[RMDB]
Structure probing data (DMS and 2A3) for a 207-nucleotide construct. 2A3 adducts were read by reverse transcription with SuperScript II with manganese.
RNA sequence: GGGAACGACUCGAGUAGAGUCGAAAAUAAACUAUGCCGACUAGAGAUAGGAAAACGUCAUGCUUGACUUCUCCUGCACCUUAUGAGAAACCAAAGUCUUUGGGUUCUGGGGGGAGUAUGGUCGCAAGGCUGAAACUUAAAGGAAUUGACGGAAGGGCAACACAGAUACCUUCGGGUAUCUGUGUUGAAAAGAAACAACAACAACAAC
Reactivity to DMS in 0.01 (KOAc 150mM, MgCl2 10mM, bicine 150mM(pH8.5), 24C), signal-to-noise 1, nucleotides 027 to 156: u000a070a050a110c020u000a050u000g010c030c040g030a110c060u000a060g010a140g020a180u010a050g000g000a080a090a050a050c060g020u000c040a050u000g000c100u000u000g010a090c000u000u010c030u000c020c000u000g000c050a070c000c010u000u010a060u030g020a080g010a040a040a050c030c070a050a080a160g010u000c060u010u000u000g010g010g020u000u000c010u000g010g010g030g010g090g000a050g030u010a060u010g020g010u000c040g040c070a030a050g020g020c030u000g010a070a030a030c070u000u000a090a040a020g010g000a030a070u000u000g030a030c020g030g000a020a030g010g000g000
Reactivity to 2A3 in 0.01 (KOAc 150mM, MgCl2 10mM, bicine 150mM(pH8.5), 24C), signal-to-noise 3, nucleotides 027 to 156: u070a000a050a010c060u060a040u150g070c010c010g050a040c030u040a030g020a030g050a150u100a100g070g000a060a080a020a030c040g030u040c020a030u090g080c040u070u090g010a040c000u050u010c000u030c010c010u040g020c050a040c010c030u080u090a090u290g070a030g020a060a050a020c080c000a140a060a070g110u040c040u050u050u050g030g000g000u030u020c050u100g000g000g000g010g010g000a000g000u010a050u080g000g010u050c040g020c040a000a030g000g000c000u020g030a050a020a010c030u070u080a060a020a010g010g010a040a030u030u020g030a060c000g000g010a000a030g010g000g000
Source information
It was measured as part of the RMDB library PDB130.